[RMDB]
RNA sequence: GGGAACGACUCGAGUAGAGUCGAAAACAUAAGACCUCAGAGCUAAUGAGCCACAUACCUACCCAAGGUGAAAGCUCCUUCUCUCGCAAUGUGUAACUCAUGAUUCUCACGACCCCUGGUUGGAGAGCGCGCUAACACGCCUUCGGGCGUGUUAGAACUACACAUGAUUCUUCGGAAUCAUGUGUAGAAAAGAAACAACAACAACAAC
Reactivity to DMS in 0.01 (KOAc 150mM, MgCl2 10mM, bicine 150mM(pH8.5), 24C), signal-to-noise 2, nucleotides 027 to 156: c040a120u020a070a120g030a100c030c030u000c050a100g010a080g000c070u000a140a140u010g000a060g030c030c030a100c050a090u010a020c030c010u000a090c010c020c030a120a130g000g040u000g000a090a090a100g000c050u010c010c030u000u000c020u000c040u000c020g030c050a090a050u000g000u000g020u000a060a080c030u000c010a070u000g000a110u000u000c040u000c020a090c020g010a110c030c000c010c020u000g030g020u010u000g020g000a130g020a090g040c050g010c060g000c020u000a010a000c000a030c010g010c000c000u000u010c300g070g060g060c000g030u000g020u000u000a010g010a050a160
Reactivity to 2A3 in 0.01 (KOAc 150mM, MgCl2 10mM, bicine 150mM(pH8.5), 24C), signal-to-noise 4, nucleotides 027 to 156: c020a040u190a080a090g040a050c010c030u060c080a030g020a020g060c040u130a110a040u080g010a020g020c030c000a060c010a050u160a040c030c010u040a060c030c020c050a060a020g000g010u040g040a120a040a010g020c000u020c010c020u080u020c030u000c010u040c040g020c100a070a110u070g050u020g010u150a060a050c020u020c080a030u070g050a170u150u010c020u000c010a150c040g060a070c000c000c010c090u100g020g000u020u010g050g010a040g010a010g070c060g000c000g000c050u000a000a000c000a000c000g000c010c010u020u060c180g060g010g000c000g000u000g000u000u000a000g000a000a000
Structure probing data (DMS and 2A3) for a 207-nucleotide construct. The RNA was probed in 150 mM KOAc, 10 mM MgCl2 and 150 mM bicine (pH 8.5) at 24 C. Values cover nucleotides 27 to 156.